[RMDB]
RNA sequence: GGGAACGACUCGAGUAGAGUCGAAAAAUUUGAUGAAACUUCGGAUCAAUACUACUUACCUGCCUAAUAAUCCAAAUCGCUACAGGCUUCUUCCUGGCAAUCCACUAUACAGCCAACAUUAAUUUAGUCCGUAGUCUGGAUUCGUCCAGACUACGGAAAAAGAAACAACAACAACAAC
Reactivity to 2A3 in 0.01 (KOAc 150mM, MgCl2 10mM, bicine 150mM(pH8.5), 24C), signal-to-noise 2, nucleotides 027 to 126: a000u100u120u120g080a050u010g050a000a040a080c100u000u050c070g100g000a040u000c030a000a090u050a140c010u030a000c010u070u000a070c000c000u050g050c000c000u190a180a090u080a040a010u140c060c060a140a020a020u080c040g000c000u030a000c000a040g010g010c000u000u000c000u010u000c060c000u000g080g000c000a000a020u030c000c050a080c060u090a050u070a170c040a000g020c000c000a000a030c020a090u210u260a180a040u090u090u040a080g140